[RMDB]
RNA sequence: GGGAACGACUCGAGUAGAGUCGAAAAGAUAUGGAAAUACUAACUUUUGACGGCCAUCGGAAACGAUGGGCCGAUAAGUUAAUUUCCUAAGUCGUAACCAAAACAAGUGUUCGCACUUGUUUUGGAAGGUACUGGAUCACUUCGGUGAUCCAGUACCAAAAGAAACAACAACAACAAC
Reactivity to 2A3 in 0.01 (KOAc 150mM, MgCl2 10mM, bicine 150mM(pH8.5), 24C), signal-to-noise 1, nucleotides 027 to 126: g020a060u080a000u110g010g060a020a090a060u180a230c180u010a040a040c010u000u080u300u300g300a120c040g000g000c000c000a010u000c000g000g000a050a110a000c010g000a010u010g020g050g010c010c000g060a010u030a050a000g000u000u100a030a080u030u010u040c000c010u010a110a040g030u050c050g070u090a070a150c000c000a000a010a000a010c040a000a000g040u040g100u200u250c290g120c100a000c000u030u000g000u020u000u000u000g010g010a010a080
Annotation
Chemical mapping of a 177-nucleotide RNA with 2A3. The RNA was probed in 150 mM KOAc, 10 mM MgCl2 and 150 mM bicine (pH 8.5) at 24 C. The data come from the RNA Mapping Database (RMDB), library TTRDEL.